[RMDB]
RNA sequence: GGGAACGACUCGAGUAGAGUCGAAAAUCAGCCGCGCCUCAAGGAGCGCUACCGCAGUGAGAUUCGGGAUGCGCUGCGCAAGCAGUUCGGCUACGGCAAUGUCAUGCAGAUCCCGACGGUGACGAAAUACGAGGAGUGGAUUCGUCCACUCCUCGUAAAAAGAAACAACAACAACAAC
Reactivity to 2A3 in 0.01 (KOAc 150mM, MgCl2 10mM, bicine 150mM(pH8.5), 24C), signal-to-noise 1, nucleotides 027 to 126: u110c000a010g030c010c020g050c000g000c020c000u110c050a070a080g120g000a060g060c030g000c040u030a030c000c080g000c070a040g090u090g160a200g020a150u110u050c060g000g000g000a050u000g000c000g000c020u110g020c040g000c000a050a040g000c000a000g070u190u140c030g010g000c000u030a090c050g030g000c030a030a080u200g050u140c020a010u080g090c020a020g060a110u000c000c020c000g000a040c030g060g040u060g010a020c020g080a020a040a090
Reactivity to DMS in 0.01 (KOAc 150mM, MgCl2 10mM, bicine 150mM(pH8.5), 24C), signal-to-noise 2, nucleotides 027 to 126: u020c110a110g000c050c020g020c300g000c000c020u020c100a160a130g010g000a080g030c060g020c010u000a160c120c000g000c300a060g020u050g010a150g050a220u030u010c030g010g020g000a130u000g000c010g030c000u000g000c010g000c170a050a130g000c060a030g030u000u000c050g000g030c000u000a080c080g000g050c070a120a080u000g000u000c020a040u020g010c000a050g000a070u000c000c000c020g000a130c110g000g030u000g000a030c030g030a150a160a240